[RMDB]
RNA sequence: GGGAACGACUCGAGUAGAGUCGAAAAGAGUCGUUCGCGACUCAUUUGCGUACUACAAAGGGAGCUGGGGUGUGGGAGUGGCUUCCCAAAUAGGAAGCCACGACGAUCACACCGACAGCUUUGAUCUUUGUAUCGCUCACAGGCCUUUCGAGGCCUGGGUACUGACUGUGUUCGCACAGUCAGUACCAAAAGAAACAACAACAACAAC
Reactivity to 2A3 in 0.01 (KOAc 150mM, MgCl2 10mM, bicine 150mM(pH8.5), 24C), signal-to-noise 2, nucleotides 027 to 156: g010a000g000u010c010g020u050u110c170g100c040g110a040c030u000c060a130u110u150u150g010c010g030u060a150c010u000a010c030a000a000a000g010g000g040a000g000c010u000g000g080g000g000u010g000u000g000g000g000a000g000u000g000g000c000u010u050c040c010c030a080a300a060u230a010g010g000a000a000g000c000c000a000c000g030a030c000g010a030u020c000a000c020a000c000c000g020a040c000a000g000c000u170u020u000g030a050u030c000u020u000u000g040u000a050u300c010g000c020u080c020a100c000a000g010g000c010c000u060u180u300c280g090a020g000g000c010c000u000g000